[RMDB]
RNA sequence: GGGAACGACUCGAGUAGAGUCGAAAAGAAUGGCUGUGGAGCAGAAGCUUGAAUAGCAUCUUACUGUGGCAUGAGCAAGAAAUGAGCUUUUAUUAUGUUGAUCUUUUGAUACUUUGUAGUUGUUUGUUACAGUAGUGAGCCUGCCCUGAUUAAUACAAUUCAUACAGACGUUCGCGUCUGUAUGAAUAAAAGAAACAACAACAACAAC
Reactivity to DMS in 0.01 (KOAc 150mM, MgCl2 10mM, bicine 150mM(pH8.5), 24C), signal-to-noise 2, nucleotides 027 to 156: g000a090a090u000g030g020c020u010g040u020g030g020a120g000c090a090g010a150a080g020c040u000u000g000a100a080u000a080g040c050a110u000c050u010u010a060c040u000g030u010g020g010c000a080u000g000a060g000c010a060a110g010a050a100a070u000g010a100g020c030u000u000u000u010a100u020u000a100u050g010u000u010g010a120u000c010u000u000u000u000g000a160u000a040c060u000u010u010g010u000a080g010u000u000g000u000u000u000g020u010u000a050c050a060g000u000a030g020u000g030a070g000c070c020u000g010c000c010c020u000g020a110u000u000a020a140u000a050c090a040
Reactivity to 2A3 in 0.01 (KOAc 150mM, MgCl2 10mM, bicine 150mM(pH8.5), 24C), signal-to-noise 1, nucleotides 027 to 156: g020a000a070u050g020g000c000u040g010u070g040g030a010g000c020a020g030a120a030g040c080u140u200g030a110a040u170a000g030c020a010u000c000u070u040a050c040u030g010u030g030g000c050a030u050g020a020g000c000a000a130g020a040a140a110u070g010a040g030c030u040u180u020u040a090u110u040a090u130g050u000u020g010a000u020c070u000u090u060u130g060a030u070a130c030u090u150u120g040u030a080g020u000u060g040u110u020u250g010u000u000a010c010a020g000u060a030g000u000g120a000g010c010c000u060g020c000c000c000u050g040a150u010u110a070a070u170a160c050a030